[RMDB]
RNA sequence: GGGAACGACUCGAGUAGAGUCGAAAAGAAGACUAGUUCGCUAGUCUUCAAAAGAGCUAGCAAUGUUCAGCUAGGAAAGAUCGAAAGAUCAAAUGAACAAAAAAACCAUCGACUUCGGUCGAUGGAAGUUUUAUGGACAGUUCGCUGUCCAUAAAACAAAAGAAACAACAACAACAAC
Reactivity to 2A3 in 0.01 (KOAc 150mM, MgCl2 10mM, bicine 150mM(pH8.5), 24C), signal-to-noise 2, nucleotides 027 to 126: g000a000a000g010a000c000u010a000g000u030u050c080g010c080u000a000g000u000c000u010u000c000a000a010a000a000g080a020g080c000u000a000g000c030a140a200u050g000u020u000c000a010g000c000u000a010g030g060a130a160a030g010a010u010c000g040a080a030a080g020a000u000c010a010a000a010u040g000a000a000c000a000a080a000a000a000a010a070c000c000a000u000c000g020a000c010u030u090c300g070g000u000c000g000a000u000g010g010a010a010
Reactivity to DMS in 0.01 (KOAc 150mM, MgCl2 10mM, bicine 150mM(pH8.5), 24C), signal-to-noise 2, nucleotides 027 to 126: g000a010a020g010a020c000u000a010g010u000u000c200g020c010u000a010g000u000c010u000u000c000a040a070a100a110g020a170g030c010u000a010g000c000a120a060u000g040u010u000c010a030g060c000u000a010g010g020a090a120a150g000a000u000c000g010a130a070a170g010a000u000c000a050a040a040u010g000a000a010c020a000a000a050a130a080a070a090c000c000a010u010c000g010a030c000u000u010c180g010g000u000c010g020a000u000g000g000a000a020